[RMDB]
RNA sequence: GGGAACGACUCGAGUAGAGUCGAAAAAGGGAAACGUUUGAAGUUAGUUUGGUAUUCGUUGGAUCAGCUUCACAAGGAGUGUAUUCUGAUGAUAAGCAAGUCAACAUCAAUCUAUGAGUGUCGGAGACCCUAUCAUCGUCUUCGGACGAUGAUAGGGAAAAGAAACAACAACAACAAC
Reactivity to DMS in 0.01 (KOAc 150mM, MgCl2 10mM, bicine 150mM(pH8.5), 24C), signal-to-noise 2, nucleotides 027 to 126: a040g020g030g000a070a110a070c150g010u020u000u000g040a080a090g010u000u000a080g000u010u000u000g000g020u000a100u000u000c050g030u010u020g000g020a040u000c130a120g000c030u000u000c010a040c300a090a170g010g000a020g010u000g010u000a150u000u000c080u000g010a010u000g010a010u000a040a200g010c070a050a030g030u000c030a030a010c070a070u000c040a050a040u000c050u000a050u020g020a180g000u000g010u010c050g010g000a170g000a210
Annotation:
Conditions: 150 mM KOAc, 10 mM MgCl2 and 150 mM bicine (pH 8.5), 24 C. An RNA of 177 nucleotides, treated with DMS and read out base by base. The data come from the RNA Mapping Database (RMDB), library RFMREP.